Source: RMDB library OK3TST, as collected in RNAgym. This 207-nucleotide RNA was probed chemically with DMS and 2A3. For 2A3 the reverse transcriptase was SuperScript II with manganese. Values are in units of 0.01, from 0 to 300, in steps of 10. DMS adducts were read by reverse transcription with MarathonRT. Conditions: 150 mM KOAc, 10 mM MgCl2 and 150 mM bicine (pH 8.5), 24 C.

[RMDB]
RNA sequence: GGGAACGACUCGAGUAGAGUCGAAAAGGAAACAGCUGUUCAUGUGUAAUAUUACUAACCAGACCUUUCUUUAACAAAAUUAUGUAUUUGUGAUUUGGUUGAGGUUAUUUAUAAAGAGCAAUAGUACUGAAACAGUAGGAGUUCUUAUUUGGCAUAAGAGCGAUAAUCAUUUCGAUGAUUAUCGCUCAAAAGAAACAACAACAACAAC
Reactivity to DMS in 0.01 (KOAc 150mM, MgCl2 10mM, bicine 150mM(pH8.5), 24C), signal-to-noise 1, nucleotides 027 to 156: g010g040a100a120a090c100a190g010c000u000g010u000u000c030a110u000g040u030g020u010a050a050u010a050u040u000a040c050u000a050a080c030c030a300g020a020c050c020u000u030u000c050u000u000u010a070a100c020a040a000a050a120u020u000a040u000g040u000a110u000u010u030g040u010g020a020u030u000u020g020g010u000u000g000a120g050g020u010u000a100u010u000u000a070u000a090a070a190g000a070g030c020a030a040u000a030g000u000a050c000u020g000a120a020a020c020a040g050u000a080g030g000a220g000u000u000c040u020u010a130u030u000u020g010g010c300a060u010a070a230
Reactivity to 2A3 in 0.01 (KOAc 150mM, MgCl2 10mM, bicine 150mM(pH8.5), 24C), signal-to-noise 1, nucleotides 027 to 156: g000g040a000a010a010c000a000g050c040u090g000u090u080c050a110u090g110u030g010u080a110a110u100a080u090u080a000c070u000a000a000c000c000a010g030a030c030c000u010u070u110c030u120u210u170a000a000c000a000a070a130a070u260u260a160u240g050u050a140u040u030u030g010u000g040a030u000u070u130g040g000u010u020g010a120g070g000u030u000a000u040u200u010a140u060a080a050a000g100a000g000c010a150a000u030a050g070u030a000c010u010g010a040a080a000c000a000g000u010a050g000g140a210g000u000u030c000u000u050a110u190u040u100g030g000c000a000u000a220a000